[RMDB]
RNA sequence: GGGAACGACUCGAGUAGAGUCGAAAAAAAAGGCAGGAAGAUUACGAAUGGCUUCUACUCUCUGGGUGUGGUGGCGCAUGCCUGUAAUCUCAGCACUUGAGCUGGGGAGGUCAAGGCUGCAGUGAGCCUAGGUAGUGCCACUGCACUCCAGCCUGGACGAGGUAUGAGGUUUCGACCUCAUACCUCGAAAAGAAACAACAACAACAAC
Reactivity to 2A3 in 0.01 (KOAc 150mM, MgCl2 10mM, bicine 150mM(pH8.5), 24C), signal-to-noise 1, nucleotides 027 to 156: a000a000a000a000g120g000c100a090g080g010a040a050g090a080u120u160a060c150g090a130a120u160g060g020c010u040u030c010u030a010c040u050c000u000c010u030g000g000g000u000g000u030g070g020u000g010g000c000g000c000a010u180g000c000c000u030g010u040a010a050u030c000u020c000a000g000c000a080c130u120u080g030a040g080c040u110g010g010g080g020a020g030g070u020c000a000a000g000g000c010u050g030c030a050g080u070g200a020g010c000c060u010a000g030g000u010a020g000u000g000c000c000a000c000u000g000c000a000c000u030c000c000a000g010c020c000u050g030g020a030
Annotation:
Source: RMDB library OK3TST, as collected in RNAgym. The record gives the reactivity of an RNA of 207 nucleotides to 2A3. 2A3 is a SHAPE reagent: it acylates the 2'-hydroxyl of flexible nucleotides of all four kinds. The RNA was probed in 150 mM KOAc, 10 mM MgCl2 and 150 mM bicine (pH 8.5) at 24 C. For 2A3 the reverse transcriptase was SuperScript II with manganese.